[RMDB]
The record gives the reactivity of an RNA of 207 nucleotides to 2A3 and DMS. The reactions ran in a buffer of 150 mM KOAc, 10 mM MgCl2 and 150 mM bicine (pH 8.5), at 24 C.
RNA sequence: GGGAACGACUCGAGUAGAGUCGAAAACAGCAUGAGGCGGUGGUAACCGUAGAUGUACCUGGACAUCCAGGUGAUACCGGAGGCGGUGGUGGAUGCCCGCGGGAACUCGCGUACGCGGUUCCAGAUGUUGCGCAGCGGCAUGAAGUAGUUCAUGGUACAAAAACAUCUCUUUCGAGAGAUGUUUUUGAAAAGAAACAACAACAACAAC
Reactivity to 2A3 in 0.01 (KOAc 150mM, MgCl2 10mM, bicine 150mM(pH8.5), 24C), signal-to-noise 2, nucleotides 027 to 156: c040a020g040c040a060u020g020a060g110g000c070g000g020u040g040g050u070a070a040c030c050g070u020a060g000a070u090g020u090a030c000c020u030g000g010a080c010a090u080c000c010a010g060g000u020g030a010u040a050c030c030g020g010a020g040g000c010g000g000u050g000g050u040g030g020a030u050g030c000c030c030g000c060g010g030g000a020a020c070u220c300g020c020g120u260a070c270g000c000g010g000u060u010c000c000a030g000a040u110g050u090u120g020c050g000c020a060g010c080g050g000c010a010u070g030a040a020g020u140a000g020u030u030c040a020u140g060g030u080a050
Reactivity to DMS in 0.01 (KOAc 150mM, MgCl2 10mM, bicine 150mM(pH8.5), 24C), signal-to-noise 2, nucleotides 027 to 156: c070a110g030c040a100u000g010a080g040g040c030g000g060u010g000g020u000a080a120c040c020g030u000a040g020a090u000g020u000a050c060c020u020g000g030a170c190a140u010c010c030a070g010g010u010g010a130u000a030c030c020g030g000a180g020g000c030g030g010u010g000g020u010g010g020a100u000g020c020c000c020g030c040g000g030g000a030a030c000u010c060g060c020g010u010a060c130g040c020g020g010u000u010c010c020a070g000a140u010g010u010u000g010c020g000c070a210g000c060g010g000c020a060u000g010a060a150g010u010a100g010u000u000c020a030u000g000g020u000a180

The 2A3 profile rests on 1,434 reads. Values cover nucleotides 27 to 156. For 2A3 the reverse transcriptase was SuperScript II with manganese. It was measured as part of the RMDB library OK3TST.